[RMDB]
RNA sequence: GGGAACGACUCGAGUAGAGUCGAAAAGAGAUCCCUCCCCCGGUGGAGCCCGAGGUCCACGUGCCGGUCUCGCGGACGGGGGAGGAAGAGGAGCGUGCCGGUGAAGGGGAGGAGUCGAUAGAGGGGCCGUGUCAUUACUUUUCGAAGUAAUGACACGAAAAGAAACAACAACAACAAC
Reactivity to 2A3 in 0.01 (KOAc 150mM, MgCl2 10mM, bicine 150mM(pH8.5), 24C), signal-to-noise 2, nucleotides 027 to 126: g020a010g010a070u070c010c000c000u000c010c000c000c000c000g070g000u080g030g070a080g040c020c020c040g020a050g000g090u040c020c030a070c070g040u090g070c030c020g040g010u020c010u030c050g090c070g000g030a100c030g000g030g000g000g020a010g000g000a010a000g020a030g020g020a030g000c030g010u090g050c010c030g040g030u110g050a100a080g040g010g000g000a020g020g000a040g030u050c030g080a070u060a110g070a040g030g000g000g000c050
Reactivity to DMS in 0.01 (KOAc 150mM, MgCl2 10mM, bicine 150mM(pH8.5), 24C), signal-to-noise 4, nucleotides 027 to 126: g000a180g000a150u010c040c000c000u000c000c000c000c000c010g020g020u000g010g010a120g010c040c030c050g020a080g000g000u010c010c030a080c120g020u010g020c060c060g000g010u000c020u000c050g000c110g010g010a160c020g000g000g020g010g010a000g000g010a010a020g000a100g010g010a080g020c090g020u000g020c040c030g030g000u000g010a100a100g000g000g010g010a080g000g000a070g010u010c050g010a090u010a060g000a100g010g010g000g010c240